[RMDB]
RNA sequence: GGGAACGACUCGAGUAGAGUCGAAAACUCCACGAUCACCUGCCUACCCGCCGAUCGGAUGGUCGACCAGGCCGCGCUGGGCGCGGCGAUCCGGUAUGCGGCGGUGGACAAGGACGCGGUGAUCGUGGUGAAAGUAUUAUUUCGAUAAUACUUUCACAAAAGAAACAACAACAACAAC
Reactivity to 2A3 in 0.01 (KOAc 150mM, MgCl2 10mM, bicine 150mM(pH8.5), 24C), signal-to-noise 9, nucleotides 027 to 126: c010u000c000c000a000c000g000a000u000c000a010c010c010u050g010c010c010u030a040c010c000c000g000c000c000g020a030u030c000g000g010a010u040g130g020u040c020g010a060c020c010a030g050g110c200c060g120c120g020c060u120g020g120g000c300g000c000g180g000c000g010a000u000c000c000g000g040u100a130u280g150c010g000g000c010g000g000u070g010g020a030c070a050a040g050g060a100c050g040c130g080g000u000g000a000u000c000g000u000g000
Reactivity to DMS in 0.01 (KOAc 150mM, MgCl2 10mM, bicine 150mM(pH8.5), 24C), signal-to-noise 9, nucleotides 027 to 126: c020u000c010c000a010c000g010a010u000c010a010c000c000u010g020c010c020u000a160c090c010c010g010c010c010g010a050u000c000g010g000a010u000g010g030u000c020g010a110c030c020a040g000g010c070c220g010c230g020c020u000g010g010g020c190g030c020g030g010c000g010a000u000c000c000g020g010u010a100u010g030c020g000g000c000g000g010u000g000g010a130c160a110a060g010g000a100c130g020c120g010g010u000g000a010u000c000g030u000g000
An RNA of 177 nucleotides, treated with 2A3 and DMS and read out base by base. It was measured as part of the RMDB library OK2TRN.